[RMDB]
RNA sequence: GGGAACGACUCGAGUAGAGUCGAAAAUUAUGCCAGGUAAACUUAAAGAAAGAGCUGUCAGAGCGUCAGCAACUCUUGAUGGUGAAGCUUUCGGCAGUGGAAAGGCUCUUAUGGCAUCUGAAAGUGGAAAAAGCUUUAUGUAUGCAUUUAUAGCCUCUCAUGUAAAGAGGUUCGCCUCUUUACAUGAAAAAGAAACAACAACAACAAC
Reactivity to DMS in 0.01 (KOAc 150mM, MgCl2 10mM, bicine 150mM(pH8.5), 24C), signal-to-noise 3, nucleotides 027 to 156: u000u000a070u010g020c010c030a070g000g040u000a080a080a080c060u010u010a050a100a120g020a110a080a080g000a300g010c000u010g020u000c010a040g010a050g000c020g020u000c100a170g010c020a070a070c040u010c070u000u000g030a070u000g020g010u000g000a080a100g020c030u000u000u010c070g010g000c020a060g010u000g020g010a070a050a070g010g000c020u000c050u000u010a070u010g040g020c010a020u000c050u010g020a050a050a040g030u000g010g000a100a080a110a100a300g020c020u000u000u000a040u020g010u020a050u020g020c030a080u000u000u000a080u000a090g010c010c020u000c100
Reactivity to 2A3 in 0.01 (KOAc 150mM, MgCl2 10mM, bicine 150mM(pH8.5), 24C), signal-to-noise 8, nucleotides 027 to 156: u200u110a050u140g030c010c020a020g030g030u070a070a100a120c060u120u110a150a080a020g040a040a100a010g040a040g000c000u000g020u020c020a020g010a020g100c020g030u030c010a020g020c010a040a150c020u040c030u170u170g060a080u110g050g060u030g050a120a030g030c000u020u050u100c080g010g000c010a010g000u060g040g050a110a110a040g010g000c000u000c010u040u090a080u150g090g000c010a010u000c020u070g120a070a030a020g020u070g040g050a110a110a070a050a030g010c020u050u060u030a040u090g100u050a010u030g010c010a030u040u120u090a110u090a030g000c000c010u020c010

Structure probing data (DMS and 2A3) for a 207-nucleotide construct. 2A3 is a SHAPE reagent: it acylates the 2'-hydroxyl of flexible nucleotides of all four kinds. The reactions ran in a buffer of 150 mM KOAc, 10 mM MgCl2 and 150 mM bicine (pH 8.5), at 24 C. The data come from the RNA Mapping Database (RMDB), library OK3TST.